[RMDB]
Chemical mapping of a 177-nucleotide RNA with 2A3 and DMS. For DMS, 3,686 sequencing reads were counted. It was measured as part of the RMDB library OK1LIB. The reactions ran in a buffer of 150 mM KOAc, 10 mM MgCl2 and 150 mM bicine (pH 8.5), at 24 C.
RNA sequence: GGGAACGACUCGAGUAGAGUCGAAAAGGUAGUAUGAUAGAGGAUAUUGAUUAUGUACCCCUAAAAUCUGCAGUCUGUAUUACAGCUUGUAAUUUAGGGGGCGCUGUUUGUAGGAAGCAUGCUACAGUAGCGUAGAAGGUUUCGACCUUCUACGCUAAAAAGAAACAACAACAACAAC
Reactivity to 2A3 in 0.01 (KOAc 150mM, MgCl2 10mM, bicine 150mM(pH8.5), 24C), signal-to-noise 4, nucleotides 027 to 126: g130g000u000a020g000u020a000u070g040a080u080a090g120a080g060g060a080u020a050u170u220g090a000u190u170a050u200g060u300a300c000c000c000c000u020a020a040a000a040u090c110u070g000c000a020g010u070c000u030g020u080a230u100u300a160c000a000g000c060u060u120g030u030a010a050u030u000u000a000g030g000g000g000g000c020g000c030u100g030u200u090u100g080u040a060g020g020a090a000g020c000a000u040g000c000u030a000c020a080g050
Reactivity to DMS in 0.01 (KOAc 150mM, MgCl2 10mM, bicine 150mM(pH8.5), 24C), signal-to-noise 2, nucleotides 027 to 126: g000g000u000a000g000u000a010u000g010a040u020a040g050a300g030g000a070u000a040u020u060g020a140u010u000a070u030g010u000a120c010c000c000c020u000a000a020a010a010u000c100u010g000c000a040g000u030c000u000g010u000a170u020u050a110c010a000g020c010u000u000g010u000a030a020u000u000u010a050g020g010g000g000g000c080g000c080u000g000u000u000u010g000u000a020g020g020a230a140g010c000a000u010g020c020u000a040c040a140g000